[RMDB]
RNA sequence: GGGAACGACUCGAGUAGAGUCGAAAAGGGAAUGAGCCUCGUCGUCGACGAAGGGGUGCAUUCCGAGUGCCUGAGCUGGUCGACGUCCAGCUCCCUCGGGACCACGCUGCUCUGGGCGGAAGAGUCUACGUCAUGACUAGUUCGCUAGUCAUGACGUAAAAGAAACAACAACAACAAC
Reactivity to DMS in 0.01 (KOAc 150mM, MgCl2 10mM, bicine 150mM(pH8.5), 24C), signal-to-noise 2, nucleotides 027 to 126: g000g020g000a040a020u000g020a130g010c000c040u000c010g010u000c020g030u000c250g000a100c020g010a020a090g000g000g000g010u000g000c080a070u000u000c000c010g000a030g000u010g020c080c030u000g010a030g000c000u000g000g010u000c030g040a040c230g000u010c010c000a030g000c010u010c000c010c030u010c030g030g010g000a060c130c020a110c170g000c050u000g030c020u000c040u000g010g010g020c060g020g000a110a060g010a080g000u010c050u000
Reactivity to 2A3 in 0.01 (KOAc 150mM, MgCl2 10mM, bicine 150mM(pH8.5), 24C), signal-to-noise 1, nucleotides 027 to 126: g080g020g050a040a040u030g010a000g020c010c000u000c000g080u040c010g040u090c080g060a300c050g040a070a030g000g000g010g030u010g060c010a030u010u000c000c000g010a040g010u080g060c030c080u050g030a000g000c010u000g050g030u120c050g130a170c110g100u010c000c010a010g000c000u000c010c000c000u000c000g000g010g050a010c020c020a030c060g150c000u060g030c030u050c020u060g070g000g000c060g020g000a060a040g020a020g020u040c020u060